About this RNA: Chemical mapping of a 207-nucleotide RNA with 2A3 and DMS. The reactions ran in a buffer of 150 mM KOAc, 10 mM MgCl2 and 150 mM bicine (pH 8.5), at 24 C. It was measured as part of the RMDB library M2RFPK. The 2A3 profile rests on 2,483 reads.
[RMDB]
RNA sequence: GGGAACGACUCGAGUAGAGUCGAAAACCUAUCCAAAAUGAGAUGCCAUCUUGCACACUGUGCUAAUUUGAGAUUCUCAUGCCUCCUACUUGGAGAGAUCUGGACUAGAAGUCAGGGCAUCUGACUCAAUACAUUCGUCAGUUCGCUGACGAAUGAACGCUUUUUUAUCCUUCGGGAUAAAAAAGCGAAAAGAAACAACAACAACAAC
Reactivity to 2A3 in 0.01 (KOAc 150mM, MgCl2 10mM, bicine 150mM(pH8.5), 24C), signal-to-noise 5, nucleotides 027 to 156: c010c000u010a070u020c030c010a050a090a000a090u020g000a000g000a010u050g080c020c000a010u000c010u030u040g000c010a040c070a130c160u260g010u040g020c030u170a060a080u050u030u040g170a220g020a130u080u000c020u010c020a040u050g040c010c000u010c020c000u130a290c120u180u230g010g000a010g010a010g000a040u040c070u070g030g010a010c040u060a070g040a120a010g070u010c000a000g010g090g150c070a130u110c060u010g000a010c000u010c020a030a080u090a160c000a000u000u000c000g000u000c000a010g000u030u070c160g020c110u010g000a000c000g010a000a000u000g000a010a010
Reactivity to DMS in 0.01 (KOAc 150mM, MgCl2 10mM, bicine 150mM(pH8.5), 24C), signal-to-noise 1, nucleotides 027 to 156: c030c070u020a080u010c040c070a020a090a110a120u000g000a050g000a020u000g030c140c000a060u000c070u010u020g050c000a060c000a140c040u000g020u010g000c010u000a000a030u000u000u000g040a100g010a080u010u000c010u000c020a010u000g000c070c030u020c040c000u000a070c130u010u020g020g000a060g000a150g000a100u000c040u000g010g020a120c060u030a210g000a110a140g000u000c040a040g000g000g060c090a020u000c000u000g010a060c000u010c000a030a060u000a170c010a020u010u000c020g020u000c000a040g000u000u000c300g080c020u000g020a020c000g020a000a000u000g010a090a150